Chemical mapping of a 177-nucleotide RNA with DMS and 2A3. For 2A3, 6,485 sequencing reads were counted. Reactivities are given for positions 27 through 126.
RNA sequence: GGGAACGACUCGAGUAGAGUCGAAAACAGACAGUGCUCCAGCCGCGCGCGCGCCCCAGGCCCCGGCCCGGGCCUCGGUUCCAGAAGGGAGAGGAGCCCGCCAAGGCGCGCAAGAGAGCGGGCUGCCACUGUACAUCUUCUUCGGAAGAUGUACAGUAAAAGAAACAACAACAACAAC
Reactivity to DMS in 0.01 (KOAc 150mM, MgCl2 10mM, bicine 150mM(pH8.5), 24C), signal-to-noise 4, nucleotides 027 to 126: c080a100g010a110c070a090g010u010g000c030u010c030c010a090g010c020c020g000c040g030c090g000c010g020c010g010c030c000c050c050a030g000g010c000c010c060c120g010g020c060c050c080g000g000g000c000c020u010c070g000g010u010u000c030c000a180g030a120a150g010g000g020a090g010a220g000g010a090g000c030c000c020g040c030c070a180a120g020g000c020g020c000g030c010a060a020g000a100g000a130g020c010g000g010g000c000u000g000c060c040
Reactivity to 2A3 in 0.01 (KOAc 150mM, MgCl2 10mM, bicine 150mM(pH8.5), 24C), signal-to-noise 5, nucleotides 027 to 126: c030a010g170a020c020a040g070u060g080c020u030c030c010a040g020c000c030g080c010g000c000g000c000g000c000g020c030c010c000c000a010g010g010c000c010c020c070g130g000c000c030c020g000g000g000c010c000u030c040g040g010u050u020c020c010a080g080a250a140g120g020g020a100g010a030g040g010a030g040c020c000c010g000c010c020a020a030g000g000c000g000c010g000c010a010a010g110a010g010a010g010c000g000g010g010c000u030g050c010c020